[RMDB]
RNA sequence: GGGAACGACUCGAGUAGAGUCGAAAAGACCAUUUCAUCUUCUUCGAAACGUUCCAGCGCGUCACUUAAUCCGGAGCGCACGCCGCGAGGCAAAUCGCAUUGCGUGAUAUCACCGUUGACGAUAACCUUAGGAUACCUCCUUCGGGAGGUAUCCUAAAAAAGAAACAACAACAACAAC
Reactivity to DMS in 0.01 (KOAc 150mM, MgCl2 10mM, bicine 150mM(pH8.5), 24C), signal-to-noise 1, nucleotides 027 to 126: g000a080c060c280a120u000u000u020c020a030u050c000u000u000c000u040u020c010g030a000a240a080c000g000u000u000c000c000a110g040c070g030c010g000u000c070a050c180u000u000a030a190u020c160c010g000g000a080g020c030g000c020a130c030g010c000c300g000c030g000a060g000g000c110a040a090a080u000c050g030c000a050u000u000g000c040g030u000g000a060u040a160u050c110a100c060c030g000u000u000g000a030c080g010a070u030a270a040c050c060
Reactivity to 2A3 in 0.01 (KOAc 150mM, MgCl2 10mM, bicine 150mM(pH8.5), 24C), signal-to-noise 2, nucleotides 027 to 126: g050a050c050c030a140u000u100u090c020a010u010c000u140u000c000u100u060c020g010a030a000a080c000g000u000u010c000c000a020g020c060g010c010g040u030c000a060c050u090u170a060a020u050c030c000g050g050a000g070c050g000c010a000c020g010c010c000g070c020g010a030g100g040c060a120a120a020u060c000g000c000a010u060u130g000c010g010u010g060a030u050a040u280c030a050c060c000g000u000u010g050a000c010g030a080u070a030a080c060c080